About this RNA: This 177-nucleotide RNA was probed chemically with DMS and 2A3. The 2A3 profile rests on 3,923 reads. DMS adducts were read by reverse transcription with MarathonRT. The reactions ran in a buffer of 150 mM KOAc, 10 mM MgCl2 and 150 mM bicine (pH 8.5), at 24 C. Values cover nucleotides 27 to 126.
RNA sequence: GGGAACGACUCGAGUAGAGUCGAAAAACCGGAAGCGCAGCGCGAACGCCGUUUCACCGCGCCCGGCUUCGACGCCAAGGAGACCCAGGUGAUCGUCACGGCCCACGAGGCAGCCACCGAGGUUUUCGGGCGUUACUUAAUUCGUUAAGUAACGCCCAAAAGAAACAACAACAACAAC
Reactivity to DMS in 0.01 (KOAc 150mM, MgCl2 10mM, bicine 150mM(pH8.5), 24C), signal-to-noise 2, nucleotides 027 to 126: a160c070c020g000g010a040a070g010c050g050c160a180g000c020g010c010g090a140a090c060g010c020c110g000u070u000u000c010a100c020c020g000c000g090c080c090c010g020g000c000u000u000c080g000a130c040g050c020c050a080a130g000g000a060g000a040c000c010c050a080g040g000u010g000a070u060c100g000u000c010a140c050g000g000c070c000c030a180c200g000a090g020g010c020a080g000c040c000a080c030c000g000a300g000g010u000u000u010u000c080
Reactivity to 2A3 in 0.01 (KOAc 150mM, MgCl2 10mM, bicine 150mM(pH8.5), 24C), signal-to-noise 5, nucleotides 027 to 126: a000c000c000g050g000a080a000g040c030g010c070a050g000c010g040c040g050a040a010c080g060c110c030g010u010u050u060c080a050c030c020g000c000g010c000c010c010g040g000c000u020u020c010g050a070c030g030c020c010a100a070g050g010a020g020a020c000c000c010a000g020g000u030g020a130u110c040g060u030c060a020c140g090g010c010c020c000a210c100g010a140g010g010c000a010g010c020c000a020c010c020g010a080g040g010u010u010u010u060c000